Structure probing data (2A3) for a 177-nucleotide construct. For 2A3, 486 sequencing reads were counted. It was measured as part of the RMDB library OK1LIB.
RNA sequence: GGGAACGACUCGAGUAGAGUCGAAAACUGCAUCCUCGUGAUCCCCCGCCUUGCCCCUCACAUACCAGAGUGCAGUGCAGCCAACGAUGGAACACAGGAGCCCUGCCGCAAGGAGGAGAGCGACAAGCGAGGCACCGGAGUUCGCUCCGGUGCCUCGAAAAGAAACAACAACAACAAC
Reactivity to 2A3 in 0.01 (KOAc 150mM, MgCl2 10mM, bicine 150mM(pH8.5), 24C), signal-to-noise 1, nucleotides 027 to 126: c000u000g040c020a030u050c000c040u040c010g020u060g060a060u030c000c000c000c000c000g050c020c040u010u070g000c000c000c000c000u000c040a080c010a180u130a160c040c070a000g000a000g050u140g030c010a010g020u040g000c010a000g070c040c000a030a040c200g020a010u160g020g050a150a100c160a000c000a130g060g020a000g030c000c000c000u040g030c000c010g030c110a030a030g010g000a040g030g000a060g060a000g100c030g030a020c000a070a000g020